[RMDB]
RNA sequence: GGGAACGACUCGAGUAGAGUCGAAAAAUUAUAGGCACGAGCUGCCAUGCCUGGCCCAACAGUGAUUUCAAAGGCCAUGGAUUGCAUAGGAAGCUGAAGGGGUUUGGGGAAGCUGUGAACGUUAGUCAAGGUCUUUUGGAGGCUAUCGGCAGUCUUCCUAUGAAUCAAUGUUCGCAUUGAUUCAUAGAAAAGAAACAACAACAACAAC
Reactivity to 2A3 in 0.01 (KOAc 150mM, MgCl2 10mM, bicine 150mM(pH8.5), 24C), signal-to-noise 5, nucleotides 027 to 156: a000u300u180a120u090a090g000g000c030a010c060g030a050g020c040u010g020c030c010a000u030g030c000c010u020g020g020c000c010c000a030a060c050a050g100u110g120a160u070u200u220c090a080a090a040g030g000c020c020a030u090g020g040a090u100u090g000c020a020u070a090g030g030a020a030g030c030u050g050a070a070g020g020g000g020u050u140u110g040g000g000g000a000a020g000c040u020g040u020g090a070a020c050g030u070u070a030g020u040c040a070a040g060g010u030c000u040u110u060u080g060g010a020g020g000c020u030a040u170c050g030g050c020a010g020u000c000u020u000c000
Reactivity to DMS in 0.01 (KOAc 150mM, MgCl2 10mM, bicine 150mM(pH8.5), 24C), signal-to-noise 3, nucleotides 027 to 156: a130u000u000a090u000a050g000g010c020a060c030g010a150g010c030u000g000c000c020a080u000g010c000c020u000g010g020c010c000c020a080a170c080a150g010u010g000a110u000u000u020c050a070a160a090g010g020c000c010a100u000g000g020a120u000u000g010c020a100u010a160g030g000a080a090g020c030u000g020a080a120g020g000g000g020u000u010u010g040g000g030g000a070a080g010c020u000g020u000g030a070a080c040g010u000u000a040g020u010c040a070a120g020g000u000c030u010u000u010u010g030g010a130g020g010c010u000a040u000c040g010g030c010a070g000u000c000u000u000c010